[RMDB]
RNA sequence: GGGAACGACUCGAGUAGAGUCGAAAAAAGAUAUGGAACUAAGGGAGCGAUAUUGAGACCAACAGCAGGCUCGGAAACGAGCCUGACAUGGUUGUAAGUAUCGCAUCGAUCUUAGUUCCUAAGUCAACGAUCACGUAUAGUUCGCUAUACGUGAUCGAAAAGAAACAACAACAACAAC
Reactivity to DMS in 0.01 (KOAc 150mM, MgCl2 10mM, bicine 150mM(pH8.5), 24C), signal-to-noise 3, nucleotides 027 to 126: a140a030g010a050u000a300u020g010g010a010a010c000u000a020a010g000g020g000a020g050c010g000a010u000a000u000u010g000a200g010a010c010c000a030a110c300a230g030c010a010g020g000c010u000c010g000g000a100a140a230c010g010a010g030c000c000u010g010a000c080a160u000g000g000u000u000g000u020a200a090g010u000a000u000c000g020c010a190u010c160g000a020u000c000u000u000a010g010u000u000c000c000u000a010a080g000u000c030a110a250